About this RNA: An RNA of 177 nucleotides, treated with DMS and 2A3 and read out base by base. For 2A3 the reverse transcriptase was SuperScript II with manganese. For 2A3, 1,154 sequencing reads were counted. For DMS the reverse transcriptase was MarathonRT. Conditions: 150 mM KOAc, 10 mM MgCl2 and 150 mM bicine (pH 8.5), 24 C.
[RMDB]
RNA sequence: GGGAACGACUCGAGUAGAGUCGAAAAAAUGCAGGCCAUUUUUGCGCAUUGCGGCUUUGAUGCCCUGGAUACGUGUAGAGUCCGCUGGAAGCUUGAUUUUCAUCCAUUCCGGCUUGCGCAGCAGGGCUAAAUACGCAGGGUUCGCCCUGCGUAUUUAAAAAGAAACAACAACAACAAC
Reactivity to DMS in 0.01 (KOAc 150mM, MgCl2 10mM, bicine 150mM(pH8.5), 24C), signal-to-noise 4, nucleotides 027 to 126: a070a090u000g010c040a070g000g010c050c020a080u020u000u010u010u010g000c100g010c020a070u000u010g030c100g000g010c100u000u010u000g010a110u010g010c030c000c010u000g000g010a100u010a060c090g010u010g010u010a090g000a210g010u010c080c060g010c030u000g000g010a020a010g020c040u010u000g000a110u000u010u010u000c070a040u000c060c040a170u000u000c050c010g010g000c010u000u000g010c040g000c020a060g020c080a060g010g000g000c020
Reactivity to 2A3 in 0.01 (KOAc 150mM, MgCl2 10mM, bicine 150mM(pH8.5), 24C), signal-to-noise 2, nucleotides 027 to 126: a040a000u170g030c030a020g090g030c070c010a060u180u150u000u120u200g050c050g010c070a100u030u060g040c010g040g020c030u100u050u070g060a070u180g000c000c000c000u010g100g010a100u090a210c100g040u060g050u120a040g070a010g220u040c040c000g020c030u010g020g020a010a030g050c060u100u120g080a150u090u130u150u150c050a020u030c030c000a010u080u000c010c020g000g040c020u000u040g030c040g020c000a010g030c000a000g010g010g000c010